Structure probing data (2A3) for a 207-nucleotide construct.
RNA sequence: GGGAACGACUCGAGUAGAGUCGAAAAAGCUGUUUUCUGCUGCAUUUACAAUUCUGCUGUGCAAAUAAAUUAAGGGGACUUAUGACAGCUCAAUUUACUUUAUCUGGUGAAACCCCAAAGACAUUAUUACUAUAAUUUUAGCAUAUUUAACUCAAUGCCAUGAAAUUUAGUUCGCUAAAUUUCAUGGAAAAGAAACAACAACAACAAC
Reactivity to 2A3 in 0.01 (KOAc 150mM, MgCl2 10mM, bicine 150mM(pH8.5), 24C), signal-to-noise 2, nucleotides 027 to 156: a020g000c030u060g010u060u110u000u020c050u110g030c000u020g050c000a000u010u180u060a060c050a030a100u080u050c070u180g000c040u000g000u010g030c000a020a010a010u110a030a020a040u300u050a100a090g000g000g020g020a010c010u080u050a040u160g020a040c000a030g010c000u000c020a000a040u030u070u040a000c040u060u190u210a090u120c010u020g020g000u030g030a050a030a070c000c080c000c040a000a030a000g030a020c030a030u070u070a060u210u060a090c010u080a090u050a290a210u190u220u080u060a020g020c010a030u100a090u250u210u160a090a030c000u020c030a050a000u000g010
For 2A3 the reverse transcriptase was SuperScript II with manganese. The reactions ran in a buffer of 150 mM KOAc, 10 mM MgCl2 and 150 mM bicine (pH 8.5), at 24 C.